[RMDB]
RNA sequence: GGGAACGACUCGAGUAGAGUCGAAAACUGACUAUUUGUGUCGGUAUGGUGAUUGCGACUAACGUCACUUAUUACAUGCUACUGACCUAUAUGCCGAGCUAUCUGUCUCACAGCCUGCAUUAUUCAGCAUUUGUUCGUCUUUCGAGACGAACAAAUGAAAAGAAACAACAACAACAAC
Reactivity to 2A3 in 0.01 (KOAc 150mM, MgCl2 10mM, bicine 150mM(pH8.5), 24C), signal-to-noise 4, nucleotides 027 to 126: c010u020g060a030c010u080a160u210u130u110g190u060g000u050c030g000g000u050a060u090g090g000u020g050a090u020u170g050c030g020a040c060u110a150a020c060g000u010c020a000c000u070u040a100u100u100a070c030a050u130g090c010u030a050c010u030g030a030c000c010u050a060u020a010u240g000c020c010g030a020g010c000u020a020u130c030u040g090u000c020u010c060a050c040a010g010c010c000u020g000c010a030u020u100a080u100u140c020a020g010
Reactivity to DMS in 0.01 (KOAc 150mM, MgCl2 10mM, bicine 150mM(pH8.5), 24C), signal-to-noise 3, nucleotides 027 to 126: c010u000g010a050c060u000a070u020u000u000g020u020g040u000c020g010g040u010a040u010g000g030u010g020a060u000u000g020c060g010a050c090u020a070a140c300g010u000c010a020c030u000u010a030u010u000a050c050a060u010g010c160u000a020c040u000g010a050c030c040u010a080u010a050u000g000c010c030g010a070g040c040u000a050u010c060u000g010u010c050u000c030a050c130a080g000c050c010u000g010c100a080u000u010a090u000u000c060a110g020

About this RNA
An RNA of 177 nucleotides, treated with 2A3 and DMS and read out base by base. For DMS the reverse transcriptase was MarathonRT. For 2A3, 3,173 sequencing reads were counted. It was measured as part of the RMDB library OK2TST.